[RMDB]
RNA sequence: GGGAACGACUCGAGUAGAGUCGAAAAAUCCUCAGGUUCAUAAGCGUGAUGAUUGGGUGUUCAUGCUCCAUGCAUGACAUGUGCCUCCUUUGAACCUUGUUACGCCCUUGGCACAUUACCCAUCUGAAAAAGACGUUCGCGUUCGCGCGAACGUCAACAUAGACUGAAGCUUCGGCUUCAGUCUAUGAAAAGAAACAACAACAACAAC
Reactivity to 2A3 in 0.01 (KOAc 150mM, MgCl2 10mM, bicine 150mM(pH8.5), 24C), signal-to-noise 3, nucleotides 027 to 156: a010u010c000c000u010c020a010g010g000u000u000c010a020u050a300a030g030c080g150u110g090a100u030g010a030u130u210g010g020g000u070g030u080u070c000a000u000g000c010u090c220c100a120u300g010c000a000u010g000a010c010a010u000g000u000g000c000c000u060c000c000u050u010u000g000a000a010c000c000u000u060g040u060u080a090c090g100c030c030c040u050u040g000g000c000a000c000a010u000u140a020c000c010c010a010u000c010u070g090a050a040a040a050a060g010a000c000g000u000u000c010g010c000g020u030u080c190g020c000g010c010g110a000a010c000g010u000c000a000a000
Reactivity to DMS in 0.01 (KOAc 150mM, MgCl2 10mM, bicine 150mM(pH8.5), 24C), signal-to-noise 1, nucleotides 027 to 156: a100u000c030c020u010c060a040g010g000u010u000c020a020u010a070a070g010c130g050u000g040a170u000g030a120u000u000g040g010g040u000g020u000u000c030a020u000g010c030u000c140c220a230u020g030c000a030u010g000a050c210a120u000g000u000g030c010c010u000c180c050u010u010u000g000a010a020c020c020u000u020g020u010u010a100c170g000c080c060c070u000u010g030g000c000a000c000a130u000u040a080c000c000c000a050u000c000u030g000a140a070a120a070a110g000a040c000g020u000u000c000g030c000g000u000u020c300g040c050g060c000g010a030a000c000g000u010c000a000a080
Source: RMDB library M2RFOK, as collected in RNAgym. This 207-nucleotide RNA was probed chemically with 2A3 and DMS. The RNA was probed in 150 mM KOAc, 10 mM MgCl2 and 150 mM bicine (pH 8.5) at 24 C. 2A3 adducts were read by reverse transcription with SuperScript II with manganese. DMS adducts were read by reverse transcription with MarathonRT.